An RNA of 177 nucleotides, treated with DMS and 2A3 and read out base by base.
The RNA was probed in 150 mM KOAc, 10 mM MgCl2 and 150 mM bicine (pH 8.5) at 24 C.
Source: RMDB library OK2TRN, as collected in RNAgym.
For 2A3, 28,963 sequencing reads were counted.
For 2A3 the reverse transcriptase was SuperScript II with manganese.
In probing experiments dimethyl sulfate is read out at A N1 and C N3, which are open when not base-paired.
RNA sequence: GGGAACGACUCGAGUAGAGUCGAAAACAUCCACUGCUACGGCAGUGGAUGAACGAGGUAGGUACGCCUACCUCGAAAGGAGGAUGUAUCCAUAUACAUUAAACGUCCAUGGUACGCCAUGGACGAAUCCACGUAAAUAUUUCGAUAUUUACGUGGAAAAAGAAACAACAACAACAAC
Reactivity to DMS in 0.01 (KOAc 150mM, MgCl2 10mM, bicine 150mM(pH8.5), 24C), signal-to-noise 7, nucleotides 027 to 126: c010a010u000c000c000a000c000u000g020c000u000a110c220g040g000c000a000g020u000g000g010a000u000g010a030a100c030g020a010g020g010u000a010g000g020u000a090c300g020c000c000u000a000c000c000u000c000g000a030a070a090g000g000a080g010g010a020u000g000u000a020u000c070c050a120u010a090u000a030c020a020u000u000a060a130a210c020g010u000c000c000a020u000g000g010u000a120c280g030c000c000a010u000g010g000a000c010g000a030a030
Reactivity to 2A3 in 0.01 (KOAc 150mM, MgCl2 10mM, bicine 150mM(pH8.5), 24C), signal-to-noise 8, nucleotides 027 to 126: c000a000u000c000c000a000c000u000g010c010u020a080c200g160g000c000a000g010u010g010g000a000u000g000a010a020c020g000a000g000g000u000a000g010g010u040a020c200g070c040c000u010a000c000c000u000c000g000a030a010a000g050g030a040g070g020a020u030g010u030a030u010c080c060a050u080a010u020a190c010a010u050u120a100a140a050c010g000u000c000c000a000u000g000g000u040a050c280g040c050c000a000u000g000g000a000c000g000a000a010